[RMDB]
RNA sequence: GGGAACGACUCGAGUAGAGUCGAAAACAGUUAUGUGCGUCCCUCCCGAAGCUGCGCGCUCGGUCGAAGAGGACGACCAUCGCCGAUAGAGGACGACCGGUCUUCGGUCAAGCGAAUAAGAGUAAAAAACUAACUGUCAGUUCGCUGACAGUUAGUUAAAAGAAACAACAACAACAAC
Reactivity to 2A3 in 0.01 (KOAc 150mM, MgCl2 10mM, bicine 150mM(pH8.5), 24C), signal-to-noise 3, nucleotides 027 to 126: c030a030g030u210u140a150u160g160u130g000c010g000u000c010c000c000u010c000c010c010g050a150a030g010c010u070g010c060g000c030g000c150u000c000g000g030u050c080g050a080a010g050a180g030g000a000c010g010a010c000c000a040u020c010g000c000c020g010a030u040a080g080a050g060g020a030c050g080a110c030c100g160g050u050c040u130u090c010g000g020u040c030a000a020g000c000g050a050a010u170a160a070g110a010g170u260a000a090a050a030
Reactivity to DMS in 0.01 (KOAc 150mM, MgCl2 10mM, bicine 150mM(pH8.5), 24C), signal-to-noise 4, nucleotides 027 to 126: c060a120g010u010u000a070u000g020u000g010c040g010u000c020c000c000u010c030c010c000g010a070a060g040c010u000g020c160g030c100g010c010u000c020g010g000u010c120g000a070a030g030a150g030g000a050c010g000a050c040c090a080u000c010g000c010c060g000a060u010a170g010a070g000g000a040c040g000a130c160c170g010g000u000c060u000u000c010g010g010u010c050a090a090g000c030g000a060a070u010a050a110g010a130g020u010a000a070a060a100